[RMDB]
RNA sequence: GGGAACGACUCGAGUAGAGUCGAAAAGAUAUGGAACUUGAAGCGAGGAUCUGUAGGUCUUGUCGGAAACGACAACCUACAGGGAGCUUCCAAGUUCCUAAGUCAAACAGCACGUUCGCGUGCUGAAUCACCUCUGGUAGUUCGCUACCAGAGGUGAAAAAGAAACAACAACAACAAC
Reactivity to DMS in 0.01 (KOAc 150mM, MgCl2 10mM, bicine 150mM(pH8.5), 24C), signal-to-noise 2, nucleotides 027 to 126: g010a020u000a300u020g000g030a000a000c010u000u010g000a040a010g010c000g020a080g020g000a000u010c010u010g000u010a000g010g020u010c130u000u010g000u010c010g000g000a050a050a140c000g010a000c000a010a010c010c000u010a000c000a020g030g000g000a010g010c010u000u000c110c110a000a000g000u000u000c000c010u000a020a120g000u000c030a120a070a270c020a000g010c000a010c000g010u000u010c170g010c020g060u000g010c000u000g010a070a090
Reactivity to 2A3 in 0.01 (KOAc 150mM, MgCl2 10mM, bicine 150mM(pH8.5), 24C), signal-to-noise 2, nucleotides 027 to 126: g020a000u060a010u150g000g010a000a000c000u000u000g010a000a000g010c020g100a300g030g030a010u020c000u000g000u010a000g000g000u040c110u160u050g000u010c000g030g000a040a040a040c010g000a000c000a000a020c020c000u010a000c000a000g000g000g010a000g000c000u020u040c060c000a000a010g000u000u000c000c000u000a060a010g070u010c030a060a080a120c040a020g010c000a000c010g040u140u130c300g030c010g120u010g000c000u000g020a010a070